[RMDB]
RNA sequence: GGGAACGACUCGAGUAGAGUCGAAAAGUGGUGACAUGGGAUUAGUCCCACCUCCUUGCACUGUUAUGAACCACUUGGAAGAAUGUUUGUAUAUGAAUGGUGGGCACCCUCUGUAAGACAGAGGGCAAAGUUGUACAACGGUUUUCUGGAGCUGGGAAAUCAUUAGCACUUUCGAGUGCUAAUGAUUAAAAGAAACAACAACAACAAC
Reactivity to DMS in 0.01 (KOAc 150mM, MgCl2 10mM, bicine 150mM(pH8.5), 24C), signal-to-noise 2, nucleotides 027 to 156: g000u000g010g000u000g010a040c060a080u010g020g000g010a090u000u000a110g030u000c000c000c020a040c070c030u000c030c040u020u010g030c050a090c090u020g020u010u000a130u000g020a170a140c030c030a080c040u000u000g010g010a130a080g020a070a100u010g020u000u010u000g030u000a070u010a070u000g010a030a070u010g000g020u000g020g030g040c040a070c010c010c000u000c000u000g020u010a110a220g020a300c030a010g020a010g000g020g030c010a030a050a150g030u010u050g010u020a030c030a020a020c040g040g010u000u000u000u000c040u010g010g010a070g010c030u010g040g000g030a070
Reactivity to 2A3 in 0.01 (KOAc 150mM, MgCl2 10mM, bicine 150mM(pH8.5), 24C), signal-to-noise 3, nucleotides 027 to 156: g030u020g010g020u070g030a040c060a140u090g040g020g010a070u120u070a040g150u120c000c000c000a000c000c020u040c000c020u020u070g010c050a050c090u060g040u210u090a100u160g050a030a060c010c010a050c070u020u060g050g040a080a080g020a080a110u100g050u040u100u060g070u030a090u030a050u140g110a140a020u090g000g010u010g020g010g030c000a020c000c000c000u000c000u000g040u080a090a060g090a090c000a010g000a020g000g010g000c000a010a020a010g030u080u070g020u010a000c010a040a000c030g000g030u010u010u000u000c010u030g050g030a000g040c020u020g000g020g000a020